Chemical mapping of a 177-nucleotide RNA with 2A3 and DMS. DMS (dimethyl sulfate) methylates the pairing face of unpaired adenines and cytosines. The reactions ran in a buffer of 150 mM KOAc, 10 mM MgCl2 and 150 mM bicine (pH 8.5), at 24 C. For DMS, 7,201 sequencing reads were counted. For 2A3 the reverse transcriptase was SuperScript II with manganese.
RNA sequence: GGGAACGACUCGAGUAGAGUCGAAAAGAGCGGACGCGGGCUCGGCGGGCUAGACGAAUCGACGCGCCAACUUUCUCGGAUCGAAGAAGCUAUACGCUUUACCCCCAUGAGUGUGUACAAGGUGAUCAGAAUUUAAACCUUUCGAGGUUUAAAUUCUAAAAGAAACAACAACAACAAC
Reactivity to 2A3 in 0.01 (KOAc 150mM, MgCl2 10mM, bicine 150mM(pH8.5), 24C), signal-to-noise 4, nucleotides 027 to 126: g040a020g010c070g010g030a030c040g010c030g030g110g010c060u030c030g020g000c030g000g000g010c040u050a040g040a090c040g040a080a060u040c030g070a040c050g010c010g010c030c000a050a070c050u050u120u030c030u030c040g050g030a050u030c030g050a100a040g010a040a000g140c030u070a070u040a240c100g010c000u030u000u160a140c010c000c000c000c010a050u120g010a040g090u050g010u020g000u010a020c020a060a040g040g060u050g020a080u130c050
Reactivity to DMS in 0.01 (KOAc 150mM, MgCl2 10mM, bicine 150mM(pH8.5), 24C), signal-to-noise 4, nucleotides 027 to 126: g030a100g000c080g020g000a040c070g010c070g010g000g000c050u000c030g020g010c040g010g010g040c030u030a030g010a090c050g000a090a080u010c060g010a100c060g020c040g020c020c040a090a100c070u020u000u010c010u000c040g000g000a050u010c050g000a090a120g010a080a050g000c060u000a050u030a080c070g000c020u010u010u010a170c070c000c020c030c030a080u010g000a070g010u000g010u010g010u000a030c060a040a060g010g000u000g000a110u010c100